An RNA of 207 nucleotides, treated with DMS and 2A3 and read out base by base. 2A3 adducts were read by reverse transcription with SuperScript II with manganese.
RNA sequence: GGGAACGACUCGAGUAGAGUCGAAAAAGGUGAUUUCUCCUGCACCUUUAUCGAUGGAGGAACUCGACUUUGCUGUGGGUCCCAAAGGGACCUUAGGUGCAGACAGUUACCGGCGGUGAAGUGUGAGCAUAGGUUCGUGUCUUCGGACACGAACCAAUCCAUUGAUAUCCUUCGGGAUAUCAAUGGAAAAAGAAACAACAACAACAAC
Reactivity to DMS in 0.01 (KOAc 150mM, MgCl2 10mM, bicine 150mM(pH8.5), 24C), signal-to-noise 1, nucleotides 027 to 156: a030g030g020u010g000a080u000u010u000c040u000c070c000u000g000c000a030c020c000u000u000u000a030u000c060g010a100u010g030g000a160g000g010a050a060c050u000c020g000a030c060u000u000u000g030c040u000g010u000g020g010g010u000c000c000c020a060a180a150g050g070g000a010c000c000u000u000a020g030g020u000g010c080a140g000a070c080a090g020u000u000a040c060c030g000g030c050g000g000u000g000a020a020g010u000g000u030g000a110g030c030a110u010a110g030g010u000u000c000g050u000g000u000c000u000u000c300g060g030a030c030a020c000g010a000a000c010c010a040a080
Reactivity to 2A3 in 0.01 (KOAc 150mM, MgCl2 10mM, bicine 150mM(pH8.5), 24C), signal-to-noise 3, nucleotides 027 to 156: a000g060g010u050g010a060u040u020u110c030u040c010c020u040g020c030a020c020c010u020u130u120a120u100c120g030a070u150g080g030a060g010g040a030a040c020u010c020g050a010c010u030u020u070g020c000u020g000u100g050g000g000u010c040c010c000a100a100a120g000g000g010a000c000c020u010u070a040g000g010u020g010c000a010g060a240c020a010g030u060u070a030c000c000g020g000c020g000g020u030g020a010a040g020u070g020u080g140a030g010c070a100u140a180g010g000u000u000c000g000u010g000u000c000u010u050c210g060g000a000c000a000c000g000a000a000c000c000a000a000

The reactions ran in a buffer of 150 mM KOAc, 10 mM MgCl2 and 150 mM bicine (pH 8.5), at 24 C. The DMS profile rests on 2,675 reads.